An RNA of 177 nucleotides, treated with 2A3 and DMS and read out base by base. DMS adducts were read by reverse transcription with MarathonRT. The data come from the RNA Mapping Database (RMDB), library M2PK90. The reactions ran in a buffer of 150 mM KOAc, 10 mM MgCl2 and 150 mM bicine (pH 8.5), at 24 C. Values cover nucleotides 27 to 126.
[RMDB]
RNA sequence: GGGAACGACUCGAGUAGAGUCGAAAAGCCGUGCUCGAGAGGGAGCAGUAAAUGCAGAGCUAUCCCGUCGUUUCGCUAAACAAAUGCGAAACGACAAAUUGCGUUACAUACGCAAUCCUCUAAUGAAACACGUUACGUACUUCGGUACGUAACGUGUAAAAGAAACAACAACAACAAC
Reactivity to 2A3 in 0.01 (KOAc 150mM, MgCl2 10mM, bicine 150mM(pH8.5), 24C), signal-to-noise 3, nucleotides 027 to 126: g040c010c020g090u060g000c000u000c010g120a070g000a020g050g060g010a010g000c050a000g070u120a010a170a090u200g040c070a010g040a040g040c010u030a050u060c020c000c000g000u000c010g000u000u000u010c010g010c010u050a150a170a190c070a040a090a030u070g000c010g010a010a000a000c010g000a010c000a010a090a000u010u000g000c000g010u040u090a170c090a110u150a020c000g000c000a010a030u020c000c000u030c010u030a080a130u240g070a070a100
Reactivity to DMS in 0.01 (KOAc 150mM, MgCl2 10mM, bicine 150mM(pH8.5), 24C), signal-to-noise 2, nucleotides 027 to 126: g020c040c080g070u010g050c000u000c000g000a050g000a030g000g020g000a020g010c010a050g020u000a040a070a140u010g000c070a060g000a090g000c030u000a180u000c000c000c020g050u000c000g010u000u000u010c000g040c020u000a040a110a160c300a110a080a180u030g000c000g010a000a030a000c010g000a000c000a010a010a060u010u000g000c000g040u000u030a140c240a110u000a000c040g000c000a010a000u000c000c010u000c030u020a120a080u010g000a100a150